RNA sequence: GGGAACGACUCGAGUAGAGUCGAAAAGAUAUGGAGAGGUAACCCAACAAGGCUACACUCGGAAACGAGUGUCAGCUGGGUUACUACCCACCUCCUAAGUCAAAAGGAGUCACUUCGGUGACUCCAAGUAUAUUUAAGGGUUCGCCCUUAAAUAUACAAAAGAAACAACAACAACAAC
Reactivity to 2A3 in 0.01 (KOAc 150mM, MgCl2 10mM, bicine 150mM(pH8.5), 24C), signal-to-noise 3, nucleotides 027 to 126: g010a000u040a010u080g010g010a030g030a050g080g000u000a010a010c020c010c030a110a200c170a180a140g020g000c010u010a000c010a000c000u000c000g000g000a000a020a000c010g000a000g010u000g010u030c040a010g000c000u010g010g000g000u010u010a000c000u070a060c030c050c000a180c030c000u000c000c000u030a040a010g040u060c030a030a020a060a210g000g010a000g000u010c000a000c020u060u120c300g140g000u020g000a000c000u000c000c000a000a000
Reactivity to DMS in 0.01 (KOAc 150mM, MgCl2 10mM, bicine 150mM(pH8.5), 24C), signal-to-noise 4, nucleotides 027 to 126: g010a030u000a040u020g010g000a020g010a240g010g000u000a010a010c000c000c000a210a160c200a080a090g000g000c010u000a030c010a000c000u010c000g010g010a040a030a050c000g020a020g000u000g000u000c130a010g010c000u000g030g020g000u000u000a000c000u000a050c210c100c090a230c250c000u000c000c000u000a020a130g000u010c040a110a050a110a120g000g010a030g010u000c000a000c000u000u020c190g020g010u010g000a010c000u000c000c000a000a030